RNA sequence: GGGAACGACUCGAGUAGAGUCGAAAAGAUAUGGAGCUGCAGCGUGCGAAGAACUACAUGAAGAAGCACCAUGUCGGAAACGACAUGGUGCGUAAAAUGUAGGGAGCACCCUGCAGCUCCUAAGUCACCUAUGUUACACCUUCGGGUGUAACAUAGGAAAAGAAACAACAACAACAAC
Reactivity to DMS in 0.01 (KOAc 150mM, MgCl2 10mM, bicine 150mM(pH8.5), 24C), signal-to-noise 2, nucleotides 027 to 126: g040a000u000a020u010g010g000a020g000c000u030g030c010a020g020c300g020u010g000c000g030a070a170g000a280a300c000u020a010c030a000u000g000a020a100g010a280a300g030c020a000c000c000a000u000g000u000c000g020g000a000a010a010c000g030a000c000a000u000g000g040u000g010c000g030u010a000a050a300a010u010g000u000a000g010g020g000a000g040c010a030c000c150c000u000g000c010a000g000c000u000c000c000u000a000a010g000u000c010a300